[RMDB]
The record gives the reactivity of an RNA of 207 nucleotides to DMS and 2A3.
RNA sequence: GGGAACGACUCGAGUAGAGUCGAAAAGUCUGUGCGUUUCCAUUUGAGUAUCCUGAAAACGGGCUUUUCAGCAUGGAACGUACAUAUUCAAUAGUAGGAGUGCAUAGUGGCCCGUAUAGCAGGCAUUGAGGCGAGGAUUGUUUCGACAAUCCUCGAAUCUCAAGGACUUAUUCGUAAGUCCUUGAGAAAAAGAAACAACAACAACAAC
Reactivity to DMS in 0.01 (KOAc 150mM, MgCl2 10mM, bicine 150mM(pH8.5), 24C), signal-to-noise 3, nucleotides 027 to 156: g000u000c040u000g040u000g030c030g020u000u000u000c000c000a130u000u000u020g000a170g030u000a050u010c040c000u000g000a040a060a150a130c060g020g030g020c070u000u000u000u000c040a130g000c100a030u000g000g010a050a050c030g000u000a080c010a060u000a050u000u000c080a070a100u010a110g020u000a060g000g010a170g030u000g010c020a100u000a120g030u010g010g000c010c000c010g020u000a060u000a120g020c030a050g000g020c060a150u000u000g000a130g020g010c010g020a040g030g000a050u000u000g020u000u000u000c220g030a100c010a020a010u000c000c000u010c010g010a020a060
Reactivity to 2A3 in 0.01 (KOAc 150mM, MgCl2 10mM, bicine 150mM(pH8.5), 24C), signal-to-noise 4, nucleotides 027 to 156: g090u030c050u020g020u030g020c020g000u020u110u070c020c010a030u080u050u050g040a040g010u100a090u140c010c010u020g050a030a050a030a050c080g000g000g020c030u100u080u040u080c050a030g010c010a020u020g000g020a040a010c030g030u010a000c000a000u080a030u030u130c030a050a100u060a140g060u030a010g010g080a040g020u040g010c040a040u090a150g090u090g040g000c000c000c000g020u040a050u060a050g040c030a010g030g010c020a020u030u120g060a020g040g070c010g000a000g000g000a000u000u000g010u000u120u050c100g060a010c000a000a000u000c000c000u000c000g000a000a010
For DMS the reverse transcriptase was MarathonRT.
Reactivities are given for positions 27 through 156.
The reactions ran in a buffer of 150 mM KOAc, 10 mM MgCl2 and 150 mM bicine (pH 8.5), at 24 C.